Conditions: 150 mM KOAc, 10 mM MgCl2 and 150 mM bicine (pH 8.5), 24 C. Structure probing data (2A3 and DMS) for a 177-nucleotide construct. It was measured as part of the RMDB library OK2TRN. DMS adducts were read by reverse transcription with MarathonRT. Reactivities are given for positions 27 through 126.

[RMDB]
RNA sequence: GGGAACGACUCGAGUAGAGUCGAAAAGCGAUCGUACCCAUGUCUAGGGUACGUACGAUGCGCUAGACAUGACGGAUCGUACCGAUCCAUGCAUCGUACCUCAUGGUGUACACACUGGUACGUACUACAGUGCUUAGUCAUUCGUGACUAAGCACUGAAAAGAAACAACAACAACAAC
Reactivity to 2A3 in 0.01 (KOAc 150mM, MgCl2 10mM, bicine 150mM(pH8.5), 24C), signal-to-noise 4, nucleotides 027 to 126: g030c000g010a020u040c020g050u080a050c030c000c020a020u040g040u000c040u050a020g120g000g030u020a020c020g030u050a040c060g120a210u040g020c140g040c050u030a010g020a030c020a020u080g040a040c070g080g010a010u010c010g010u020a110c040c070g020a030u020c000c000a020u090g010c010a100u070c020g020u020a030c000c000u040c030a090u110g090g000u150g070u150a050c140a010c010a020c160u040g020g020u030a030c030g050u040a080c040u060a030
Reactivity to DMS in 0.01 (KOAc 150mM, MgCl2 10mM, bicine 150mM(pH8.5), 24C), signal-to-noise 5, nucleotides 027 to 126: g010c020g000a020u000c040g020u000a140c140c050c020a040u000g000u000c050u000a020g000g000g040u010a010c090g020u000a020c140g010a100u000g010c010g010c050u000a020g000a040c080a010u010g010a090c140g000g000a020u000c010g020u000a170c100c060g000a060u010c030c020a110u000g010c070a060u000c010g010u010a030c010c030u000c110a060u010g000g000u010g010u000a080c140a080c140a070c160u000g010g010u000a020c030g000u000a070c150u000a190